[RMDB]
RNA sequence: GGGAACGACUCGAGUAGAGUCGAAAACGGAUGGGUGGUGGCCGUUGCGGCCGCCCCAACGGGUGCUCGACACCCACGACGGCAGGCAUCGGGCCCCUCGCACGCGCACUCCACCACUACCCCCAUCGCUAGUCCGUAAUUUCGAUUACGGACUAGCAAAAGAAACAACAACAACAAC
Reactivity to 2A3 in 0.01 (KOAc 150mM, MgCl2 10mM, bicine 150mM(pH8.5), 24C), signal-to-noise 4, nucleotides 027 to 126: c050g070g040a080u120g060g020g060u130g010g020u040g010g060c010c030g060u090u130g030c030g040g000c000c010g020c000c000c010c000a010a030c050g010g000g000u050g000c090u130c170g110a130c030a010c010c020c010a010c040g060a010c020g020g020c040a110g040g000c010a060u060c090g030g040g000c010c010c010c000u020c010g000c010a030c010g030c000g000c030a040c060u010c010c000a010c010c010a030c010u070a090c000c000c010c000c010a060u110c040
Reactivity to DMS in 0.01 (KOAc 150mM, MgCl2 10mM, bicine 150mM(pH8.5), 24C), signal-to-noise 1, nucleotides 027 to 126: c090g030g000a030u020g000g000g000u020g050g000u030g010g050c000c000g060u070u010g030c040g030g000c050c000g000c010c000c060c060a030a080c090g010g000g000u000g000c010u070c240g050a190c040a060c000c000c010a040c170g040a250c190g030g000c070a100g000g010c010a080u030c090g000g000g050c010c020c020c000u000c020g010c010a050c000g000c180g030c000a080c020u010c060c020a030c000c060a040c000u030a160c000c000c000c010c080a050u020c120
Notes
Conditions: 150 mM KOAc, 10 mM MgCl2 and 150 mM bicine (pH 8.5), 24 C. This 177-nucleotide RNA was probed chemically with 2A3 and DMS. For DMS, 1,794 sequencing reads were counted. The data come from the RNA Mapping Database (RMDB), library OK1LIB. Values cover nucleotides 27 to 126.